[RMDB]
RNA sequence: GGGAACGACUCGAGUAGAGUCGAAAAGAACUCACCAGCAAAUGUUUACGACAAGAUUCGACAUUUGCAAAUUACGUAGCGAUCUUCCAGAAUCUUGUCGAAACGUACCCAAUCGCUACGCCCUAAAGAGGGCGUAAACUUUCGAGUUUACGCCCUCAAAAGAAACAACAACAACAAC
Reactivity to 2A3 in 0.01 (KOAc 150mM, MgCl2 10mM, bicine 150mM(pH8.5), 24C), signal-to-noise 2, nucleotides 027 to 126: g020a060a030c010u050c110a040c020c030a020g020c040a030a020a130u110g030u070u100u110a050c010g010a000c000a000a020g010a000u020u030c030g020a010c120a100u120u050u200g000c050a040a020a040u100u070a030c060g020u030a010g030c010g010a020u030c040u180u020c170c020a020g010a000a000u000c000u010u000g030u030c000g060a090a040a000c060g040u060a050c010c010c000a010a000u020c000g000c000u010a000c000g040c010c000c010u070a080a080a010
Reactivity to DMS in 0.01 (KOAc 150mM, MgCl2 10mM, bicine 150mM(pH8.5), 24C), signal-to-noise 2, nucleotides 027 to 126: g000a100a060c060u000c050a060c110c060a150g000c030a050a030a070u000g000u000u000u000a270c020g010a010c000a010a020g000a020u000u000c000g000a090c230a030u010u000u020g010c110a050a040a100u000u020a080c010g000u010a010g000c000g020a020u000c160u000u000c150c100a080g000a010a000u000c000u000u020g000u000c010g000a030a060a100c090g000u010a070c010c030c010a120a040u000c020g020c000u000a020c030g000c020c020c000u000a050a060a140